[RMDB]
RNA sequence: GGGAACGACUCGAGUAGAGUCGAAAAUUUCGUUCCAUUGUUAUCUAAAGAUUGCCAUUCUGAAAUGCUGUAAAUAGCAUGAUUCAAAUCAUCUUGUGCUGCAGCAGUUUCUUUGUAAUAUGCUUCAGCAAUAACGUGUCUUCGGACACGUUAUUGCAAAAGAAACAACAACAACAAC
Reactivity to DMS in 0.01 (KOAc 150mM, MgCl2 10mM, bicine 150mM(pH8.5), 24C), signal-to-noise 1, nucleotides 027 to 126: u000u000u020c060g010u010u000c010c000a090u000u010g010u000u000a090u000c080u000a120a020a120g010a080u010u000g020c090c240a040u000u000c050u010g020a020a030a070u000g000c000u010g000u010a070a080a070u000a070g020c060a020u000g000a100u010u000c150a070a080a170u000c120a030u000c050u000u010g010u000g010c070u000g010c100a030g000c000a030g030u000u000u000c020u000u010u000g010u010a090a010u040a030u010g000c060u000u000c100a040
Record summary:
The record gives the reactivity of an RNA of 177 nucleotides to DMS. Source: RMDB library RFMREP, as collected in RNAgym. The reactions ran in a buffer of 150 mM KOAc, 10 mM MgCl2 and 150 mM bicine (pH 8.5), at 24 C.